This 207-nucleotide RNA was probed chemically with 2A3. It was measured as part of the RMDB library M2RFPK. For 2A3, 370 sequencing reads were counted.

[RMDB]
RNA sequence: GGGAACGACUCGAGUAGAGUCGAAAAACUGGUAUAGGCGAUUAAUAAAUCUUCUGUAAAUGCUGUAAGAGGAUUACCCCUUGAGGUUUCAGCACUAGGCUGCUCUAGCGAUUAAUCAAUGCAUUUGUAACGGAAAGACAGUUCGCUGUCUUUCCAACUUGAGUUAUGCGUUCGCGCAUAACUCAAGAAAAGAAACAACAACAACAAC
Reactivity to 2A3 in 0.01 (KOAc 150mM, MgCl2 10mM, bicine 150mM(pH8.5), 24C), signal-to-noise 1, nucleotides 027 to 156: a040c050u100g050g020u080a090u050a250g060g010c010g040a020u010u140a160a090u150a220a110a140u000c010u100u000c020u010g160u190a030a030a140u060g020c010u020g150u260a170a000g000a010g090g000a010u000u020a110c000c010c050c020u030u100g060a090g000g080u000u070u180c020a010g050c010a000c050u060a080g130g000c030u010g000c000u030c040u100a020g040c020g010a050u000u150a060a030u100c060a090a030u110g010c080a080u090u040u050g100u110a120a050c010g000g000a000a000a000g000a000c000a000g000u080u120c300g030c060u000g000u000c000u010u000u000c000c000a000a000